[RMDB]
RNA sequence: GGGAACGACUCGAGUAGAGUCGAAAAGAAGGAAGACCCCCCACCCUUAGAUACAAGCACAGUGCUGCGUGAGAAGGUUGGGCACUGUCUCAUACUUGAAAGAGUAACCUCCAUCCGAGGUGGUGCGAUGCGAUAUAGGCUUCGGCCUAUAUCGCAUAAAAGAAACAACAACAACAAC
Reactivity to DMS in 0.01 (KOAc 150mM, MgCl2 10mM, bicine 150mM(pH8.5), 24C), signal-to-noise 3, nucleotides 027 to 126: g030a070a030g000g010a100a110g000a280c020c020c030c020c000c010a060c060c000c010u000u010a050g030a190u020a100c070a110a070g020c080a060c110a120g030u000g010c050u010g010c060g020u010g010a130g010a060a030g000g010u000u010g000g000g000c070a030c010u000g000u000c020u000c070a170u010a010c030u010u000g000a090a060a120g000a050g010u020a070a120c070c020u000c010c070a090u000c160c070g000a080g010g020u000g010g010u010g020c100g000
Chemical mapping of a 177-nucleotide RNA with DMS. The data come from the RNA Mapping Database (RMDB), library OK2TRN. The RNA was probed in 150 mM KOAc, 10 mM MgCl2 and 150 mM bicine (pH 8.5) at 24 C. For DMS the reverse transcriptase was MarathonRT.